RNA sequence: GGGAACGACUCGAGUAGAGUCGAAAAUUGAUAAUUUGUUGUCUAACUUCAUUUAAAUGAAUUGAAACAAAUUUAAUACAAGUGGAUGUAGGAUAACCGUCCGUCCUUUACAUUGGUAUAAAAGUGAACGACACAGACCUCUUCGGAGGUCUGUGAAGUAUCACGAUGACUUCGGUCAUCGUGAUACAAAAGAAACAACAACAACAAC
Reactivity to 2A3 in 0.01 (KOAc 150mM, MgCl2 10mM, bicine 150mM(pH8.5), 24C), signal-to-noise 1, nucleotides 027 to 156: u110u080g030a000u030a110a020u020u010u010g010u020u000g140u080c140u090a040a070c080u050u020c020a000u020u140u300a150a300a050u020g020a020a070u030u090g030a000a000a000c030a000a060a000u040u130u080a140a040u140a110c000a100a000g070u040g030g030a080u120g030u240a050g000g060a020u000a260a000c090c020g080u070c050c030g010u020c020c000u030u070u020a080c080a140u080u120g050g070u130a120u150a130a110a000a000g150u140g080a020a090c050g020a010c090a000c000a010g000a000c000c000u000c000u140u070c170g110g000a000g000g000u000c000u000g000u000g000a000a000
This 207-nucleotide RNA was probed chemically with 2A3. For 2A3 the reverse transcriptase was SuperScript II with manganese. Values cover nucleotides 27 to 156. Source: RMDB library M2RFPK, as collected in RNAgym.